Chemical mapping of a 207-nucleotide RNA with 2A3.
RNA sequence: GGGAACGACUCGAGUAGAGUCGAAAAUUGCUCAGGCGGCGUAACGCUGCUUGAAAGACCACAUGAAAGUCCUGGCGGGUUAAGCGCCGCCAGGCGGGGUUCGGAGGCGCCUGGCAACAGAAGCCUCAUUACAUGGAAGACUUCGGUCUUCCAUGAACCAAUAAGUUACGUUCGCGUAACUUAUUGGAAAAGAAACAACAACAACAAC
Reactivity to 2A3 in 0.01 (KOAc 150mM, MgCl2 10mM, bicine 150mM(pH8.5), 24C), signal-to-noise 1, nucleotides 027 to 156: u100u150g010c040u020c010a000g000g000c010g000g050c020g000u080a090a070c300g020c000u000g020c000u010u030g020a000a020a000g070a040c030c030a030c040a130u300g110a110a050a000g300u010c020c000u010g010g000c000g000g000g020u080u080a090a030g100c110g030c040c000g000c020c000a010g000g010c000g000g000g000g000u050u280c140g080g000a000g000g000c010g000c000c020u050g290g010c000a010a010c000a020g000a010a000g000c000c010u000c000a000u000u020a020c000a000u000g010g010a000a000g000a000c000u010u030c270g080g010u010c000u000u000c030c000a000u000g000a000a010